Structure probing data (2A3) for a 177-nucleotide construct. The reactions ran in a buffer of 150 mM KOAc, 10 mM MgCl2 and 150 mM bicine (pH 8.5), at 24 C. For 2A3, 4,201 sequencing reads were counted. For 2A3 the reverse transcriptase was SuperScript II with manganese.
[RMDB]
RNA sequence: GGGAACGACUCGAGUAGAGUCGAAAACAAGCGCGUUUUGUGCACAGGAUGUUUGGAGAAACAAAGCGCGCCGAGUCAGCGGCAGCGUAGGUCGCCUCCUGUGCGGCCACCCACAUGUUGCCUGGCCUCUAGUGAGCGGGUUCGCUCGUUCGCUAGAAAAAGAAACAACAACAACAAC
Reactivity to 2A3 in 0.01 (KOAc 150mM, MgCl2 10mM, bicine 150mM(pH8.5), 24C), signal-to-noise 2, nucleotides 027 to 126: c060a020a000g000c010g000c010g020u000u000u000u000g020u020g000c010a000c000a010g010g030a080u140g300u260u250u260g290g030a230g090a000a080a010c000a000a000a000g000c000g000c020g000c000c000g000a030g030u020c030a010g090c130g300g000c000a010g000c010g020u010a010g000g000u000c010g010c000c000u000c000c000u000g000u010g010c000g000g010c000c000a000c000c060c000a050c010a160u300g000u000u000g000c000c000u010g000g000c010c020